An RNA of 177 nucleotides, treated with 2A3 and DMS and read out base by base.
[RMDB]
RNA sequence: GGGAACGACUCGAGUAGAGUCGAAAAGGGUCGUGGACAGUGGCAGGUCCACCAUUUGGACACCAUGGGAUGUGAAACAUACCCGUAGAGUGCGGCUCUAUCAUGAUGAGCGGCUCCAUCACGAAUAGGCUGGUUUCUGCUUCGGCAGAGGCCAGCCAAAAGAAACAACAACAACAAC
Reactivity to 2A3 in 0.01 (KOAc 150mM, MgCl2 10mM, bicine 150mM(pH8.5), 24C), signal-to-noise 4, nucleotides 027 to 126: g050g020g020u020c010g010u030g020g020a020c010a060g040u090g090g020c040a030g090g000u000c000c000a020c000c010a070u080u070u100g030g010a030c000a000c020c020a030u060g010g000g000a010u010g070u090g130a100a100a030c040a010u170a260c000c000c000g000u060a060g020a020g010u300g250c040g040g010c010u000c000u010a050u100c090a100u110g150a030u090g000a010g010c000g030g000c010u000c000c020a050u130c030a000c060g070a090a070u100a160
Reactivity to DMS in 0.01 (KOAc 150mM, MgCl2 10mM, bicine 150mM(pH8.5), 24C), signal-to-noise 4, nucleotides 027 to 126: g000g020g010u000c070g010u010g000g020a040c070a090g020u040g000g000c140a150g020g000u010c000c000a050c100c100a070u010u040u020g000g000a200c010a070c030c010a020u010g000g030g010a050u000g010u010g010a210a050a250c020a020u000a090c000c010c000g000u010a080g010a110g000u000g010c020g010g000c010u000c000u010a060u020c180a080u030g010a090u040g000a090g010c080g000g010c030u000c010c040a080u010c110a070c110g000a110a080u040a070
Source: RMDB library OK1LIB, as collected in RNAgym. Values cover nucleotides 27 to 126. Conditions: 150 mM KOAc, 10 mM MgCl2 and 150 mM bicine (pH 8.5), 24 C. High DMS reactivity at an A or C suggests that its Watson-Crick edge is free.